RNA sequence: GGGAACGACUCGAGUAGAGUCGAAAAGGCCUUCUCCACGGGACCGAACCACUCCUGAUCGUCGAUGGAUGAGGUCACGAGGACCAUUCUCUUCUUGUCCAGGAAGAACACGUGCUGCACUGCGAUCCAAAUAGGAUCCAUUCGUGGAUCCUAUUUGAAAAGAAACAACAACAACAAC
Reactivity to 2A3 in 0.01 (KOAc 150mM, MgCl2 10mM, bicine 150mM(pH8.5), 24C), signal-to-noise 9, nucleotides 027 to 126: g020g020c000c000u050u030c030u020c020c010a040c020g030g020g030a040c030c030g020a040a030c030c020a040c080u030c020c020u080g070a150u090c040g120u030c060g100a120u070g040g150a290u050g060a020g010g010u030c020a010c100g060a050g030g040a020c030c000a090u190u020c040u000c000u070u020c040u050u090g050u050c030c020a030g050g020a040a040g040a070a030c060a010c080g080u080g020c020u030g010c020a020c080u040g010c030g030a040u030c030
Reactivity to DMS in 0.01 (KOAc 150mM, MgCl2 10mM, bicine 150mM(pH8.5), 24C), signal-to-noise 9, nucleotides 027 to 126: g010g010c030c020u000u000c090u000c020c030a100c060g000g000g010a040c030c020g010a160a120c040c030a080c120u000c020c030u010g010a080u000c070g010u000c100g010a110u010g000g000a070u010g010a200g010g000u000c010a070c090g010a090g010g010a080c090c050a100u000u000c060u000c020u000u000c030u000u000g010u000c040c050a140g000g000a050a050g010a060a080c110a070c090g010u000g010c020u000g000c050a060c050u000g010c050g010a100u010c070
An RNA of 177 nucleotides, treated with 2A3 and DMS and read out base by base. The DMS profile rests on 32,673 reads. Source: RMDB library OK2TRN, as collected in RNAgym. DMS adducts were read by reverse transcription with MarathonRT.